[RMDB]
RNA sequence: GGGAACGACUCGAGUAGAGUCGAAAAAGCAGUCGAUUCGUCGACUGCUAAUGGGUCGGGACUACAUCACAGGUUCUUCGCUAGCCCUCUUUCGACCAGUAAAAAAGAGCUUAUUCGUAAGCUCUAAGAGAUAGUUUAUAUUCGUAUAAACUAUCUCAAAAGAAACAACAACAACAAC
Reactivity to 2A3 in 0.01 (KOAc 150mM, MgCl2 10mM, bicine 150mM(pH8.5), 24C), signal-to-noise 2, nucleotides 027 to 126: a000g000c000a000g010u000c000g010a020u040u090c110g060u000c010g110a020c000u000g000c000u000a000a060u080g030g020g010u040c000g020g000g010a020c020u100a030c070a110u140c060a030c030a100g000g050u070u020c000u080u090c040g030c090u060a050g010c010c010c000u030c030u010u080u040c020g030a050c010c040a030g170u210a020a120a050a030a010a000g010a000g000c000u020u010a020u040u070c130g040u020a000a000g000c000u020c000u010a020a010
Reactivity to DMS in 0.01 (KOAc 150mM, MgCl2 10mM, bicine 150mM(pH8.5), 24C), signal-to-noise 6, nucleotides 027 to 126: a030g010c000a010g010u000c000g010a010u000u020c180g020u000c000g010a010c000u000g010c000u000a010a030u010g000g010g030u000c030g010g000g020a170c040u000a060c090a080u000c120a080c150a110g010g010u000u000c030u000u010c090g030c110u000a090g000c030c020c020u000c120u000u000u000c040g010a070c020c030a150g010u010a000a050a060a080a080a030g010a020g010c000u000u000a020u000u010c160g000u000a000a000g010c000u000c000u000a030a090

The data come from the RNA Mapping Database (RMDB), library M2PK50.
Chemical mapping of a 177-nucleotide RNA with 2A3 and DMS.